[RMDB]
RNA sequence: GGGAACGACUCGAGUAGAGUCGAAAAUUGCUCACCCUUCACAGCGCCCUCUCACAAGGUGGUGUGGGCAGUCUUUAGCACAUACCAGUGGUCACAACGGUUCUUGUUAAGUUCAGAGGUGACUGAAUCCUUUUAUUUGGUUCGCCAAAUAAAAGGAAAAAGAAACAACAACAACAAC
Reactivity to DMS in 0.01 (KOAc 150mM, MgCl2 10mM, bicine 150mM(pH8.5), 24C), signal-to-noise 4, nucleotides 027 to 126: u000u000g010c040u010c030a100c050c020c020u000u000c110a060c110a080g010c050g010c050c000c020u000c050u010c100a090c200a130a090g020g020u000g010g010u000g020u000g000g000g020c030a060g010u010c070u000u000u020a100g010c040a030c070a060u000a090c020c020a090g010u010g010g010u000c030a020c040a050a080c100g010g000u000u010c030u000u010g010u000u010a060a070g020u000u010c010a050g010a130g010g010u000g000a070c020u000g010a100a120